[RMDB]
RNA sequence: GGGAACGACUCGAGUAGAGUCGAAAAGAUAUGGAAUAUUCAGGAGGGAGCUCAUCAAGUCGGAAACGACUUGAGAGCAUCGAUCUCCUGAGAUAUUCCUAAGUCAAAACUGGCCUUCGGGCCAGAACUAUAUAUCCCAGUUCGCUGGGAUAUAUAGAAAAGAAACAACAACAACAAC
Reactivity to DMS in 0.01 (KOAc 150mM, MgCl2 10mM, bicine 150mM(pH8.5), 24C), signal-to-noise 4, nucleotides 027 to 126: g010a060u000a300u010g000g010a020a010u010a010u000u000c010a010g010g010a020g020g010g000a020g030c000u000c000a080u000c000a000a010g010u000c000g010g000a130a080a240c010g000a010c000u000u000g000a040g000a010g020c010a110u000c170g000a060u010c000u000c000c010u000g010a020g010a040u000a010u000u000c000c000u000a030a130g010u000c040a100a070a160a170c010u000g000g010c000c000u000u020c230g040g020g010c010c000a010g000a030a150
Reactivity to 2A3 in 0.01 (KOAc 150mM, MgCl2 10mM, bicine 150mM(pH8.5), 24C), signal-to-noise 4, nucleotides 027 to 126: g020a020u080a030u200g020g010a010a010u020a060u050u050c000a000g000g010a000g010g040g000a010g000c000u010c010a290u040c000a300a010g020u010c020g000g070a120a120a120c010g000a000c000u010u010g000a000g000a000g000c000a030u170c000g010a030u000c000u020c000c000u010g000a010g000a010u020a020u010u000c000c010u020a160a020g050u020c020a000a000a190a290c000u000g010g030c020c000u080u070c300g070g000g020c010c000a000g000a010a000